[RMDB]
RNA sequence: GGGAACGACUCGAGUAGAGUCGAAAAGAUAUGGAGCACACCGAGAUCCCACCUACCCACCUCGGAAACGAGAGGGUGGAGAUCGUUUGACGUGUGCUCCUAAGUCAAAGUCUUCUUCGGAAGACAACCUUAUCUAGAUCUUCGGAUCUAGAUAAGGAAAAGAAACAACAACAACAAC
Reactivity to 2A3 in 0.01 (KOAc 150mM, MgCl2 10mM, bicine 150mM(pH8.5), 24C), signal-to-noise 9, nucleotides 027 to 126: g070a070u230a130u300g000g000a000g010c000a000c010a000c000c030g020a020g010a080u000c010c000c000a000c000c020u190a220c040c030c030a120c080c010u010c010g040g040a090a090a010c010g010a010g010a070g040g010g000u060g060g020a300g000a020u020c010g030u110u210u270g050a030c010g000u000g000u000g010c000u000c000c010u000a010a000g010u010c070a110a050a040g000u000c000u020u000c000u040u080c270g130g010a000a000g000a000c000a010a040
Reactivity to DMS in 0.01 (KOAc 150mM, MgCl2 10mM, bicine 150mM(pH8.5), 24C), signal-to-noise 6, nucleotides 027 to 126: g010a090u000a200u000g000g000a010g010c010a020c000a010c000c020g000a080g010a010u000c010c000c010a020c010c000u010a090c080c040c060a300c130c000u000c000g010g000a090a060a130c010g010a000g000a130g000g010g010u010g000g010a120g010a000u000c000g010u010u000u010g010a210c300g000u000g010u000g010c010u000c000c000u000a010a040g000u000c100a080a110a120g010u000c000u000u000c000u010u010c190g020g000a010a010g000a010c010a050a090
This 177-nucleotide RNA was probed chemically with 2A3 and DMS. The RNA was probed in 150 mM KOAc, 10 mM MgCl2 and 150 mM bicine (pH 8.5) at 24 C. The DMS profile rests on 7,273 reads. For DMS the reverse transcriptase was MarathonRT. The 2A3 profile rests on 23,279 reads.